[RMDB]
RNA sequence: GGGAACGACUCGAGUAGAGUCGAAAAGUGUACCACACCAAGCACCAUCCAGAGUACGCGUGGGCGUUUGUAGGAGUUGCAUGCGGCCUGCUGGCUAUCGCAGCGUGCAUGUUUGCGUGCGCAUGCACCCUUAGGUCGACUUCGGUCGACCUAAGGGAAAAGAAACAACAACAACAAC
Reactivity to DMS in 0.01 (KOAc 150mM, MgCl2 10mM, bicine 150mM(pH8.5), 24C), signal-to-noise 2, nucleotides 027 to 126: g020u020g000u000a120c020c050a080c070a080c070c060a070a090g030c030a080c050c020a080u000c080c030a110g010a140g000u000a040c040g030c070g000u000g010g020g000c050g020u010u000u010g020u000a080g000g020a110g000u000u000g020c020a030u010g010c000g000g000c030c020u000g000c050u000g010g010c070u020a050u020c100g000c050a080g010c050g030u020g020c040a060u000g000u000u000u010g010c060g030u000g000c070g000c030a010u000g010c020a130
Reactivity to 2A3 in 0.01 (KOAc 150mM, MgCl2 10mM, bicine 150mM(pH8.5), 24C), signal-to-noise 2, nucleotides 027 to 126: g040u040g030u110a000c040c060a040c010a000c000c030a060a030g030c000a010c000c000a080u100c020c040a040g030a020g150u050a060c020g010c000g030u070g000g060g040c080g040u010u170u120g090u080a060g010g100a080g000u120u100g150c000a020u020g050c030g150g110c000c000u040g040c050u070g110g000c030u070a060u220c070g040c060a000g050c070g050u010g050c030a060u070g030u060u080u140g050c050g020u040g040c040g000c000a020u030g000c000a030
Overview
This 177-nucleotide RNA was probed chemically with DMS and 2A3. High 2A3 reactivity points to a flexible backbone, as in loops and unpaired stretches. The RNA was probed in 150 mM KOAc, 10 mM MgCl2 and 150 mM bicine (pH 8.5) at 24 C. For 2A3 the reverse transcriptase was SuperScript II with manganese. Source: RMDB library OK2TRN, as collected in RNAgym.